[RMDB]
RNA sequence: GGGAACGACUCGAGUAGAGUCGAAAAGAUAUGGAGAUCGCAAGGUCUCACCUCGCUCGGAAACGAGGAAGAGGUGGGAGGACUGAUGACCGAUCUCCUAAGUCAAAGCACCCGUUCGCGGGUGCAAGUAAAGGUUAUUGUUCGCAAUAACCUUUACAAAAGAAACAACAACAACAAC
Reactivity to 2A3 in 0.01 (KOAc 150mM, MgCl2 10mM, bicine 150mM(pH8.5), 24C), signal-to-noise 6, nucleotides 027 to 126: g010a000u060a030u160g000g010a000g000a010u000c000g000c080a120a220g040g030u000c020u000c020a000c000c000u010c010g120c000u000c010g010g040a100a110a080c010g010a010g070g200a190a100g010a020g050g060u070g160g300g070a100g150g090a010c010u040g060a230u160g050a160c080c030g010a000u000c000u000c000c000u010a100a010g010u010c040a100a030a090g000c000a000c000c020c030g010u050u070c280g000c020g100g020g000u010g010c000a010a000
Reactivity to DMS in 0.01 (KOAc 150mM, MgCl2 10mM, bicine 150mM(pH8.5), 24C), signal-to-noise 8, nucleotides 027 to 126: g010a040u010a300u000g000g000a000g000a010u000c000g020c050a110a190g010g010u000c000u000c000a010c000c000u000c000g000c000u000c010g000g010a120a100a230c000g010a010g000g020a090a110g000a020g010g020u000g010g000g010a090g000g010a090c030u000g010a120u000g000a120c300c010g000a010u000c000u000c000c000u000a020a070g000u000c030a080a110a170g010c000a010c000c000c000g040u000u020c230g020c020g020g000g000u000g010c010a000a060